[RMDB]
Source: RMDB library OK3TST, as collected in RNAgym.
The record gives the reactivity of an RNA of 207 nucleotides to 2A3.
Values are in units of 0.01, from 0 to 300, in steps of 10.
The 2A3 profile rests on 583 reads.
As a SHAPE reagent, 2A3 marks flexible, mostly unpaired nucleotides at the ribose 2'-OH.

RNA sequence: GGGAACGACUCGAGUAGAGUCGAAAAUCGAUCGCCGGACUGAAGGUCGGCCUGAUGGGCGUCGGCGACGCGUUCAAGGAGAUGGGCACCUCCGGCGCCGGUAGCGCGACGAAGGUCGUCGACAACACCAAGGACAUCGCGCGCGCCGAACGGGGUCUCUAUGCUUGAAUUUCGAUUCAAGCAUAGAAAAAGAAACAACAACAACAAC
Reactivity to 2A3 in 0.01 (KOAc 150mM, MgCl2 10mM, bicine 150mM(pH8.5), 24C), signal-to-noise 1, nucleotides 027 to 156: u150c000g060a020u050c030g000c100c000g030g020a050c060u190g110a150a050g000g040u010c050g070g090c000c000u210g030a140u080g030g060g000c070g010u050c040g020g000c000g000a110c000g030c000g060u050u130c040a040a090g040g040a030g070a090u170g020g040g010c010a030c000c000u000c000c000g010g000c010g000c030c000g120g040u120a150g020c040g020c000g100a180c000g000a080a010g120g040u050c050g030u020c010g120a100c050a190a070c000a040c030c050a010a030g030g000a000c020a060u080c070g000c010g020c010g000c000g000c010c000g000a040a020c030g000g020g000g060u000c030